[RMDB]
RNA sequence: GGGAACGACUCGAGUAGAGUCGAAAAACAUAGUUUGGCCGACGUCAUACCUUUGAAGACGAAUCGUUAAAGACACCAGCUCGUCUUAUAGGAGCCCAUUUAGCAAAAACAGUCCUGUAGGAACCAAUACGAUAUUAAUGUUCGCAUUAAUAUCGUAAAAAGAAACAACAACAACAAC
Reactivity to 2A3 in 0.01 (KOAc 150mM, MgCl2 10mM, bicine 150mM(pH8.5), 24C), signal-to-noise 6, nucleotides 027 to 126: a010c040a050u170a050g060u060u060u030g030g000c020c020g050a050c020g030u010c000a050u090a230c020c030u110u110u210g100a070a020g030a010c020g040a040a070u070c030g020u050u130a100a120a020g080a030c030a010c030c020a020g030c020u030c030g070u000c030u040u040a050u040a060g030g020a010g020c000c020c010a040u090u080u060a050g010c030a000a060a040a040a040c020a020g070u030c010c020u060g040u060a040g030g030a030a050c010c000a030a030
Reactivity to DMS in 0.01 (KOAc 150mM, MgCl2 10mM, bicine 150mM(pH8.5), 24C), signal-to-noise 8, nucleotides 027 to 126: a090c080a090u010a060g010u000u000u000g010g020c040c020g020a080c070g010u000c050a070u010a110c070c050u000u010u000g020a090a060g000a040c030g000a050a070u000c120g010u010u010a040a080a130g000a070c090a060c050c060a060g010c070u000c040g010u000c020u000u000a060u000a050g010g000a080g000c030c030c020a090u010u010u000a080g020c060a040a050a060a060a050c090a080g010u000c020c020u000g020u000a050g010g000a060a080c090c090a050a150